Chemical mapping of a 177-nucleotide RNA with 2A3 and DMS. For DMS the reverse transcriptase was MarathonRT. 2A3 adducts were read by reverse transcription with SuperScript II with manganese. The reactions ran in a buffer of 150 mM KOAc, 10 mM MgCl2 and 150 mM bicine (pH 8.5), at 24 C. For 2A3, 6,964 sequencing reads were counted.

[RMDB]
RNA sequence: GGGAACGACUCGAGUAGAGUCGAAAACUCGAUUGCAUUUCGACGAUACGCUAACAAUAGAUUCAAAGCGAUCUAUAAAUAAAAUAGACUAAUUGUUAAUGUCUAUGUCGGUUUUGCUUUCGAGAAAGGGUAAAGUAAUGUUCGCAUUACUUUACCCAAAAGAAACAACAACAACAAC
Reactivity to 2A3 in 0.01 (KOAc 150mM, MgCl2 10mM, bicine 150mM(pH8.5), 24C), signal-to-noise 7, nucleotides 027 to 126: c000u000c000g010a000u010u010g000c000a000u000u000u020c010g020a010c010g040a020u060a170c040g000c020u030a020a020c020a030a050u100a050g130a130u130u220c090a120a150a030g080c050g050a040u000c010u020a040u040a060a210a020u240a030a090a030a030u030a010g010a010c010u030a080a150u050u030g040u050u080a060a070u100g020u010c050u090a070u030g000u000c010g020g000u010u000u030u030g000c000u000u000u000c000g000a000g030a060a030a020
Reactivity to DMS in 0.01 (KOAc 150mM, MgCl2 10mM, bicine 150mM(pH8.5), 24C), signal-to-noise 2, nucleotides 027 to 126: c000u000c010g010a020u000u010g000c030a030u000u010u010c000g010a010c020g020a120u010a030c020g010c080u010a020a020c100a060a030u020a030g000a130u040u000c230a060a150a190g000c130g000a080u060c000u020a040u000a000a110a130u040a040a080a120a030u000a030g000a020c010u000a060a030u000u000g000u030u010a010a080u000g000u000c120u000a030u030g010u000c020g010g000u050u000u020u000g000c030u010u000u000c000g010a010g000a020a070a110